Chemical mapping of a 207-nucleotide RNA with 2A3 and DMS.
Source: RMDB library M2RFPK, as collected in RNAgym.
The 2A3 profile rests on 8,173 reads.
DMS adducts were read by reverse transcription with MarathonRT.
For 2A3 the reverse transcriptase was SuperScript II with manganese.
[RMDB]
RNA sequence: GGGAACGACUCGAGUAGAGUCGAAAAUGACGUUAAACUGCUGACUCAUACAUACUGACACCGGUUGCUCAACAGGCUGUGUGGGACAAUAGAAUACCAAGGCUGUCAAUUUGAGCUUGACGGCUGCAAAACCUGCAGUACUUCGGUACUGCAGGAAGUCCUAGUAUUUGUUCGCAAAUACUAGGACAAAAGAAACAACAACAACAAC
Reactivity to 2A3 in 0.01 (KOAc 150mM, MgCl2 10mM, bicine 150mM(pH8.5), 24C), signal-to-noise 6, nucleotides 027 to 156: u090g030a020c090g020u060u100a070a110a060c060u070g030c020u050g060a060c010u010c010a010u030a080c010a020u110a060c020u070g080a040c030a060c070c020g090g010u060u080g020c010u020c040a040a030c020a050g040g000c040u010g010u010g010u020g060g010g020a000c020a010a040u100a110g120a090a030u100a110c030c040a070a030g030g000c000u000g000u000c000a010a010u040u050u130g030a020g030c010u000u000g000a010c000g020g000c020u020g020c030a020a020a040a130c000c000u000g000c000a000g000u000a000c000u020u030c030g070g000u000a000c000u000g000c000a000g000g000a000a000
Reactivity to DMS in 0.01 (KOAc 150mM, MgCl2 10mM, bicine 150mM(pH8.5), 24C), signal-to-noise 2, nucleotides 027 to 156: u000g010a100c070g020u010u000a050a120a160c060u000g030c040u000g000a140c030u010c030a050u010a060c020a060u000a100c050u000g000a090c070a080c020c020g020g010u010u000g000c000u000c020a050a040c030a080g010g020c020u000g010u010g010u000g010g000g040a110c040a060a100u000a130g020a120a170u000a100c040c040a080a170g000g010c010u000g020u000c030a030a050u000u000u020g020a150g010c270u000u000g000a030c030g010g010c020u010g000c070a040a060a050a120c000c000u000g000c000a040g000u000a000c010u000u010c270g060g000u000a010c010u000g030c020a010g010g000a010a060